Chemical mapping of a 177-nucleotide RNA with 2A3 and DMS. Conditions: 150 mM KOAc, 10 mM MgCl2 and 150 mM bicine (pH 8.5), 24 C. The data come from the RNA Mapping Database (RMDB), library TTRDEL. For 2A3, 2,612 sequencing reads were counted. Values are in units of 0.01, from 0 to 300, in steps of 10. For 2A3 the reverse transcriptase was SuperScript II with manganese.
RNA sequence: GGGAACGACUCGAGUAGAGUCGAAAAGAUAUGGAUACCAGUCAACAGCCACCCAUCGGAAACGAUGGUGUGGACAUGACUGAUCCUAAGUCAAAGGUGAAAUCAUCGUUCGCGAUGAUUUCACCAACACAUGCAACGUCUUCGGACGUUGCAUGUGAAAAGAAACAACAACAACAAC
Reactivity to 2A3 in 0.01 (KOAc 150mM, MgCl2 10mM, bicine 150mM(pH8.5), 24C), signal-to-noise 2, nucleotides 027 to 126: g050a020u080a030u080g020g000a040u070a210c130c040a000g030u010c010a040a120c080a300g090c020c000a010c000c010c000a010u010c000g000g030a070a020a050c010g010a010u020g000g020u100g020u010g000g080a090c010a030u010g000a000c000u000g000a000u000c020c000u000a100a030g000u000c080a060a100a110g040g000u020g010a000a010a010u000c000a000u000c010g080u150u100c300g030c070g070a010u020g010a000u000u010u000c010a000c000c010a000a000
Reactivity to DMS in 0.01 (KOAc 150mM, MgCl2 10mM, bicine 150mM(pH8.5), 24C), signal-to-noise 2, nucleotides 027 to 126: g000a030u010a240u000g000g000a010u010a110c300c010a000g010u000c000a020a100c300a220g000c010c000a010c010c020c030a000u000c000g000g010a060a050a050c010g020a000u000g010g000u020g020u000g030g010a000c060a050u010g000a070c000u020g000a030u000c000c000u000a040a090g000u000c030a100a100a140g010g030u010g010a050a010a010u000c000a000u000c000g060u000u010c220g040c000g020a000u000g010a000u000u000u000c010a010c000c010a010a040